[RMDB]
RNA sequence: GGGAACGACUCGAGUAGAGUCGAAAAUCCAUUGUGAGAUGGAAUCUGAAGGAAGCCUGAGGCAAACCAUUGGUCCGACGGACAGAAAUCAUGUAUAAGGCUUACAGUUCGGAUAAGACUGCUGAACCGGUCACUAUAAUUUCGAUUAUAGUGACCGAAAAGAAACAACAACAACAAC
Reactivity to DMS in 0.01 (KOAc 150mM, MgCl2 10mM, bicine 150mM(pH8.5), 24C), signal-to-noise 8, nucleotides 027 to 126: u010c010c000a070u000u000g000u020g000a140g010a030u000g000g000a060a070u000c020u000g010a060a070g000g000a060a070g010c010c010u010g010a190g020g000c050a030a090a140c180c160a100u020u020g000g010u010c010c020g010a160c170g010g010a030c020a060g010a060a080a070u020c180a090u000g000u010a050u010a250a040g000g010c010u000u000a080c040a080g000u000u000c010g020g000a050u010a070a110g000a110c070u020g010c050u020g010a090a100c190
Reactivity to 2A3 in 0.01 (KOAc 150mM, MgCl2 10mM, bicine 150mM(pH8.5), 24C), signal-to-noise 8, nucleotides 027 to 126: u010c010c010a020u010u070g070u050g060a070g010a040u020g020g030a050a070u030c010u040g030a040a020g060g030a020a020g030c010c000u050g020a060g120g070c030a080a080a100c060c030a110u050u110g070g010u010c010c030g120a070c130g090g020a030c020a030g140a010a090a020u170c080a050u070g040u020a040u040a170a050g020g000c000u010u030a070c030a120g020u050u020c000g000g000a000u020a070a040g070a050c050u080g040c020u060g070a060a020c040